Conditions: 150 mM KOAc, 10 mM MgCl2 and 150 mM bicine (pH 8.5), 24 C. This 177-nucleotide RNA was probed chemically with 2A3 and DMS. 2A3 adducts were read by reverse transcription with SuperScript II with manganese. For 2A3, 15,663 sequencing reads were counted. For DMS, 5,717 sequencing reads were counted. Values cover nucleotides 27 to 126.

RNA sequence: GGGAACGACUCGAGUAGAGUCGAAAACGCAGUCGCUUCGGCGACUGCGAAAGAAAGCACGAAAUAGGGAAUAAAUAAUGGGUAACGUGCACCCACCAAUAAAAACGUCAGCGUUCGCGCUGACGAAGGUAUAAGACUAGUUCGCUAGUCUUAUACCAAAAGAAACAACAACAACAAC
Reactivity to 2A3 in 0.01 (KOAc 150mM, MgCl2 10mM, bicine 150mM(pH8.5), 24C), signal-to-noise 8, nucleotides 027 to 126: c020g020c000a010g010u010c010g030c070u130u130c250g090g000c000g040a000c000u010g010c000g000a000a000a000g020a010a010a000g000c010a000c020g120a050a050a090u260a130g100g030g120a060a120u170a170a150a040u240a090a180u210g010g010g010u030a080a010c010g000u000g000c000a000c000c000c000a010c010c020a070a090u210a140a060a020a010a010c010g000u000c000a000g000c000g030u050u060c140g010c000g010c070u000g010a000c000g000a000a010
Reactivity to DMS in 0.01 (KOAc 150mM, MgCl2 10mM, bicine 150mM(pH8.5), 24C), signal-to-noise 4, nucleotides 027 to 126: c010g030c000a010g030u000c010g050c000u000u010c230g030g020c010g030a020c010u000g010c000g010a010a050a080g010a070a060a100g000c010a000c000g010a060a070a130u020a090g000g010g020a140a130u000a070a090a060u010a080a070u010g000g020g020u000a080a100c010g000u000g000c020a080c000c000c000a080c140c130a080a080u010a070a020a060a120a090c000g000u000c000a010g010c000g000u000u010c230g020c000g030c020u010g000a000c000g000a010a010